[RMDB]
RNA sequence: GGGAACGACUCGAGUAGAGUCGAAAAGAUAUGGAGACUAAUCGAGUAACGCGUUGAAAUCGGAAACGAUGGAGCGUUCUCGAUGUCUCCUAAGUCAGAUCCAAGGCAAGUUCGCUUGCCUUGGAAACAUAACCACCCAGUUCGCUGGGUGGUUAUGAAAAGAAACAACAACAACAAC
Reactivity to 2A3 in 0.01 (KOAc 150mM, MgCl2 10mM, bicine 150mM(pH8.5), 24C), signal-to-noise 3, nucleotides 027 to 126: g030a020u080a040u180g010g010a000g000a000c020u270a300a030u000c000g010a000g050u220a030a000c010g030c020g250u300u080g020a030a040a010u010c010g010g030a090a050a040c020g000a010u010g000g030a020g000c010g010u000u010c000u000c000g010a000u000g000u010c000u000c000c000u000a030a010g000u000c020a020g050a230u020c000c000a000a010g000g000c000a010a000g020u100u170c270g120c160u000u000g010c000c000u000u000g000g010a010a000a010
Reactivity to DMS in 0.01 (KOAc 150mM, MgCl2 10mM, bicine 150mM(pH8.5), 24C), signal-to-noise 4, nucleotides 027 to 126: g000a040u010a300u000g000g010a020g010a020c010u000a130a080u000c000g010a030g010u010a000a000c000g030c000g010u010u010g010a060a150a020u000c000g000g010a140a090a160c000g030a020u000g000g010a100g010c000g010u000u000c000u000c000g010a000u000g000u000c000u010c000c000u000a000a050g000u010c030a120g010a140u000c000c000a010a010g000g010c000a020a010g010u010u020c230g010c000u000u000g000c010c000u000u000g000g000a010a030a110